[RMDB]
An RNA of 177 nucleotides, treated with 2A3 and DMS and read out base by base. High DMS reactivity at an A or C suggests that its Watson-Crick edge is free. It was measured as part of the RMDB library M2PK90. The reactions ran in a buffer of 150 mM KOAc, 10 mM MgCl2 and 150 mM bicine (pH 8.5), at 24 C. 2A3 adducts were read by reverse transcription with SuperScript II with manganese. For DMS, 1,491 sequencing reads were counted. DMS adducts were read by reverse transcription with MarathonRT.

RNA sequence: GGGAACGACUCGAGUAGAGUCGAAAAGUACACCCUCCCUCCCUCCCAAAAGCGCGCAAAUAAAGGGAGGGACUCAGGGAUGAGUAGGCCAAAAGGCCAUAACCCGAAGACGCGCGACGGGACAAAAAACCAUAAAUUCUUUCGAGAAUUUAUGGUUAAAAGAAACAACAACAACAAC
Reactivity to 2A3 in 0.01 (KOAc 150mM, MgCl2 10mM, bicine 150mM(pH8.5), 24C), signal-to-noise 1, nucleotides 027 to 126: g050u080a060c040a120c070c010c000u000c000c000c000u010c000c010c020u010c000c000c000a080a100a000a010g010c010g020c010g000c030a000a060a160u180a110a220a030g020g000g000a010g000g000g000a000c000u040c010a010g030g010g010a000u030g010a010g080u170a090g010g000c010c000a080a280a200a240g020g030c020c000a010u080a070a020c020c000c000g010a040a060g060a060c020g020c020g000c000g000a010c010g000g000g040a000c080a010a170a010a040
Reactivity to DMS in 0.01 (KOAc 150mM, MgCl2 10mM, bicine 150mM(pH8.5), 24C), signal-to-noise 2, nucleotides 027 to 126: g020u010a150c110a170c020c010c020u000c000c000c030u000c000c000c000u010c010c000c010a130a080a140a180g020c000g010c010g010c070a080a110a170u010a040a070a080g000g000g000a040g000g000g010a000c040u020c190a020g000g030g000a070u000g000a080g000u010a070g010g020c000c010a020a080a080a160g010g040c000c000a080u020a040a130c000c020c010g020a070a120g000a070c000g010c020g010c000g000a180c050g000g010g010a170c100a010a020a090a030